Annotation
Chemical mapping of a 177-nucleotide RNA with 2A3 and DMS.

[RMDB]
RNA sequence: GGGAACGACUCGAGUAGAGUCGAAAAACAGAAUACUCAUCGAAGUAGUCAUCCAUGAGACGCACACAGUUGGGAAACAAUUUUGCCCUGAGACAUCGACAUUGCCUGGGUGUUCUGAGGUGCAUGCUGAGCGCUAUUUAUUCGUAAAUAGCGCUCAAAAAGAAACAACAACAACAAC
Reactivity to 2A3 in 0.01 (KOAc 150mM, MgCl2 10mM, bicine 150mM(pH8.5), 24C), signal-to-noise 1, nucleotides 027 to 126: a000c020a040g050a060a050u040a100c000u060c060a060u090c140g040a110a000g030u030a010g020u030c010a040u030c070c000a050u070g010a000g000a040c020g080c000a010c000a000c010a070g080u120u050g000g050g080a190a050a000c030a030a060u050u070u070u140g010c000c000c000u040g020a020g010a010c010a040u020c020g060a060c020a090u050u180g060c000c000u040g010g000g010u000g040u140u000c010u000g090a020g000g030u050g000c010a010u030g010c020
Reactivity to DMS in 0.01 (KOAc 150mM, MgCl2 10mM, bicine 150mM(pH8.5), 24C), signal-to-noise 3, nucleotides 027 to 126: a070c130a120g000a110a040u000a070c040u010c010a080u000c120g000a120a050g020u000a070g000u010c030a070u000c060c060a060u000g000a100g020a060c080g000c040a020c080a040c100a060g000u010u010g020g030g010a080a070a060c080a070a120u000u000u000u000g000c000c020c020u000g000a050g010a030c040a010u000c040g010a070c060a090u010u010g030c130c080u020g020g030g020u010g000u010u010c040u000g020a050g010g000u010g040c040a030u000g020c190
Source: RMDB library OK2TRN, as collected in RNAgym. For 2A3, 947 sequencing reads were counted. The reactions ran in a buffer of 150 mM KOAc, 10 mM MgCl2 and 150 mM bicine (pH 8.5), at 24 C.